Chemical mapping of a 177-nucleotide RNA with 2A3 and DMS.

RNA sequence: GGGAACGACUCGAGUAGAGUCGAAAAGAUAUGGACGAGGCUCGAUAAGCUACACAUCGGAAACGAUGUUUAGCUUUUGACGAGCCGAGUCCUAAGUCAAAGUGUUGAGGGUUCGCCCUCAACACAAGUCAACAUCGUGGUUCGCCACGAUGUUGACAAAAGAAACAACAACAACAAC
Reactivity to 2A3 in 0.01 (KOAc 150mM, MgCl2 10mM, bicine 150mM(pH8.5), 24C), signal-to-noise 1, nucleotides 027 to 126: g030a010u040a040u110g000g000a000c010g030a040g010g010c000u000c020g030a130u060a250a060g000c000u000a000c010a010c000a070u000c000g040g000a050a060a020c010g010a010u020g000u010u010u000a000g020c000u020u000u060u110g090a020c010g000a000g000c010c010g000a000g010u020c000c010u010a010a010g050u090c020a010a110a160g020u020g000u000u000g000a010g000g050g050u040u180c240g190c020c000c000u000c000a000a010c000a010c000a000a020
Reactivity to DMS in 0.01 (KOAc 150mM, MgCl2 10mM, bicine 150mM(pH8.5), 24C), signal-to-noise 1, nucleotides 027 to 126: g000a000u000a290u010g020g000a030c010g000a300g010g010c000u030c000g020a150u000a010a000g020c030u000a010c050a020c000a010u000c000g000g000a070a090a200c000g000a000u000g030u020u000u000a010g020c000u000u000u000u010g020a190c150g000a010g000c060c000g010a220g010u000c000c000u000a000a060g010u000c040a070a060a060g010u000g010u010u030g000a000g000g020g010u000u010c270g040c020c000c000u000c000a000a000c000a000c000a030a060
Conditions: 150 mM KOAc, 10 mM MgCl2 and 150 mM bicine (pH 8.5), 24 C. Source: RMDB library TTRDEL, as collected in RNAgym. 2A3 adducts were read by reverse transcription with SuperScript II with manganese.